[RMDB]
RNA sequence: GGGAACGACUCGAGUAGAGUCGAAAAACAACACGCUUCGGCGUGUUGUCGACGGAGGAAGCUGAGGACGCGCAUGUGCCGCAGCAGGGAAGCGCAGCGUAAAUCAGAGGUGAUUCGUCACCUCUAACUACGUCUCGAGGUUCGCCUCGAGACGUAGAAAAGAAACAACAACAACAAC
Reactivity to 2A3 in 0.01 (KOAc 150mM, MgCl2 10mM, bicine 150mM(pH8.5), 24C), signal-to-noise 1, nucleotides 027 to 126: a000c010a000a000c000a000c010g010c000u030u030c240g130g000c000g000u000g010u020u000g000u040c020g040a020c030g010g060a100g040g020a070a050g000c050u020g010a030g020g000a060c070g000c000g020c100a140u090g060u100g000c020c020g000c010a040g070c000a050g060g000g000a040a040g010c060g010c050a010g000c060g050u080a060a070a060u120c030a000g010a000g000g030u040g010a040u030u090c170g060u010c070a000c000c030u000c020u000a050a050
Reactivity to DMS in 0.01 (KOAc 150mM, MgCl2 10mM, bicine 150mM(pH8.5), 24C), signal-to-noise 1, nucleotides 027 to 126: a060c000a020a000c000a000c000g020c000u000u000c160g020g000c000g020u000g000u000u000g000u000c030g000a120c100g010g000a070g010g000a070a080g030c080u000g020a080g020g010a180c120g010c090g020c040a100u000g000u000g020c000c000g000c070a100g000c050a050g000g030g010a140a030g000c070g010c060a030g010c110g000u010a050a090a060u030c120a000g000a010g000g010u000g020a030u000u000c120g020u000c010a020c000c000u010c000u000a030a090
Background:
An RNA of 177 nucleotides, treated with 2A3 and DMS and read out base by base. It was measured as part of the RMDB library M2PK50. The RNA was probed in 150 mM KOAc, 10 mM MgCl2 and 150 mM bicine (pH 8.5) at 24 C.